Structure probing data (2A3 and DMS) for a 207-nucleotide construct. Conditions: 150 mM KOAc, 10 mM MgCl2 and 150 mM bicine (pH 8.5), 24 C. Source: RMDB library OK3TST, as collected in RNAgym. 2A3 adducts were read by reverse transcription with SuperScript II with manganese. For 2A3, 4,691 sequencing reads were counted. For DMS, 6,355 sequencing reads were counted.

RNA sequence: GGGAACGACUCGAGUAGAGUCGAAAACGUCUUCUAGUGUUAGUAUUAAGGAGAUAUCUUGUGUAGAAGAUGUCCCGAUGGUCAACGGUUUUAAGUACCUAGUACAAACACAAGCUGAAAAGCUAGAGUUACUAAAGAAGGUGAAAAUGCAAGGCAAAUCCAAUACUGACUUCGGUCAGUAUUGGAUAAAAGAAACAACAACAACAAC
Reactivity to 2A3 in 0.01 (KOAc 150mM, MgCl2 10mM, bicine 150mM(pH8.5), 24C), signal-to-noise 6, nucleotides 027 to 156: c010g030u010c010u040u000c020u030a070g030u020g030u120u060a060g020u010a060u110u100a170a100g080g020a180g010a070u020a040u030c020u030u090g050u050g070u170a020g050a100a000g010a000u000g020u020c000c010c010g030a090u110g010g020u050c060a060a070c110g030g070u060u100u090u170a090a040g030u040a010c000c000u010a030g030u030a030c030a040a050a010c040a020c020a080a010g000c020u040g040a050a040a010a020g010c010u020a010g000a010g070u090u110a030c030u090a060a030a090g050a020a010g040g010u050g020a070a040a040a030u090g030c040a040a000g070g000c020a170a000
Reactivity to DMS in 0.01 (KOAc 150mM, MgCl2 10mM, bicine 150mM(pH8.5), 24C), signal-to-noise 3, nucleotides 027 to 156: c050g030u010c030u000u000c050u000a070g010u000g020u010u010a100g020u000a040u000u000a120a180g010g010a160g000a020u010a010u000c000u010u000g010u010g030u010a140g010a010a020g010a020u000g030u000c000c010c020g010a100u000g020g030u020c020a080a060c030g010g020u000u000u010u000a060a120g030u000a070c030c030u010a070g000u000a040c050a100a060a060c020a080c050a090a090g030c030u000g000a100a060a080a090g010c010u000a060g010a120g010u010u000a080c050u000a040a060a070g010a060a050g010g020u000g000a070a030a110a110u000g010c060a050a060g040g030c050a070a100